[RMDB]
This 207-nucleotide RNA was probed chemically with 2A3.
RNA sequence: GGGAACGACUCGAGUAGAGUCGAAAAUUACCGCCCAGGAUGGGGUGCAGCGUACCUGCAAUAUCCAGGGCACCUAGGUGCAGCCUUGUAGUUUUAGUGGACUUUAGGCUAAAGAAUUUCACUAGCAAAAAUCUUUAAGGGUUCGCCCUUAAAGAAAGAUUAAAUUUAGCUUCGGCUAAAUUUAAUCAAAAGAAACAACAACAACAAC
Reactivity to 2A3 in 0.01 (KOAc 150mM, MgCl2 10mM, bicine 150mM(pH8.5), 24C), signal-to-noise 1, nucleotides 027 to 156: u080u040a010c000c070g010c020c000c010a030g020g010a020u060g070g070g020g110u060g010c000a000g000c030g170u090a160c000c000u000g030c010a000a000u010a010u120c000c000a000g000g020g000c000a030c000c040u100a110g150g000u070g040c030a000g000c000c000u090u110g150u170a050g010u050u010u010u070a050g000u040g030g000a000c020u040u080u000a000g000g030c020u050a080a150a080g040a010a040u040u260u260c020a020c020u050a000g040c070a070a120a130a170a220u010c000u000u010u010a000a000g030g000g010u060u070c160g000c020c000c000u000u000a020a000a000g000a030a020a000

2A3 adducts were read by reverse transcription with SuperScript II with manganese.